[RMDB]
RNA sequence: GGGAACGACUCGAGUAGAGUCGAAAAUGUGGGGCCUUGAUACACCUCAAAGCCGAUCCAAGUUCUUGCCCUUUGGGCCAAGGUGUAGUUGAUGGAUUGAAAAACUGAAGUCAAUCAAUAGGGGAACCACAGAAACGGGUUUCGACCCGUUUCUGUGAAAAGAAACAACAACAACAAC
Reactivity to DMS in 0.01 (KOAc 150mM, MgCl2 10mM, bicine 150mM(pH8.5), 24C), signal-to-noise 1, nucleotides 027 to 126: u010g070u010g000g000g000g000c020c000u000u000g000a170u010a050c040a040c020c040u000c110a040a110a130g010c040c020g000a130u000c060c010a060a140g000u000u000c050u010u000g000c020c010c010u000u000u000g020g040g040c080c300a080a050g000g020u000g020u000a050g010u000u000g000a050u000g060g000a110u000u000g010a100a010a060a080a070c300u000g000a190a120g000u000c040a050a020u000c100a040a060u010a130g010g000g000g000a140a080c130